[RMDB]
RNA sequence: GGGAACGACUCGAGUAGAGUCGAAAAUGAAGCUCUGUUUUCUCAUUAAGGACCUGCCUACAGCCUGUUGUGGGGAUUGGGUCAAAUAAUUCAGGCGAUGUGCUCGUGCAGUGCGCUGGUCCCAGCGGACUUAUGAAAGUUUCGACUUUCAUAAGUCAAAAGAAACAACAACAACAAC
Reactivity to 2A3 in 0.01 (KOAc 150mM, MgCl2 10mM, bicine 150mM(pH8.5), 24C), signal-to-noise 9, nucleotides 027 to 126: u090g020a040a020g010c020u010c030u100g050u040u040u060u030c040u000c040a080u090u120a060a040g150g010a020c010c010u040g040c020c000u050a030c020a030g070c020c110u190g050u280u050g010u080g020g030g020g030a040u080u300g050g000g000u010c010a030a050a020u090a010a040u070u050c030a000g040g000c020g040a070u090g020u050g050c020u030c070g050u080g020c030a020g030u020g070c040g010c030u020g030g030u010c000c010c000a010g040c060g070
Reactivity to DMS in 0.01 (KOAc 150mM, MgCl2 10mM, bicine 150mM(pH8.5), 24C), signal-to-noise 9, nucleotides 027 to 126: u010g010a110a110g010c030u000c040u000g010u000u000u000u000c040u000c060a110u000u020a120a150g010g010a050c020c010u000g000c020c010u000a040c030a060g010c180c120u000g010u000u000g020u000g000g000g010g010a110u000u010g010g010g010u000c030a040a070a070u010a050a100u000u000c060a060g010g010c030g010a090u000g010u000g000c040u000c080g010u000g010c060a050g010u000g010c040g010c020u000g010g000u000c010c010c020a300g010c130g010
Structure probing data (2A3 and DMS) for a 177-nucleotide construct. The DMS profile rests on 45,165 reads. For 2A3, 23,588 sequencing reads were counted. For DMS the reverse transcriptase was MarathonRT. The data come from the RNA Mapping Database (RMDB), library OK2TRN. Conditions: 150 mM KOAc, 10 mM MgCl2 and 150 mM bicine (pH 8.5), 24 C.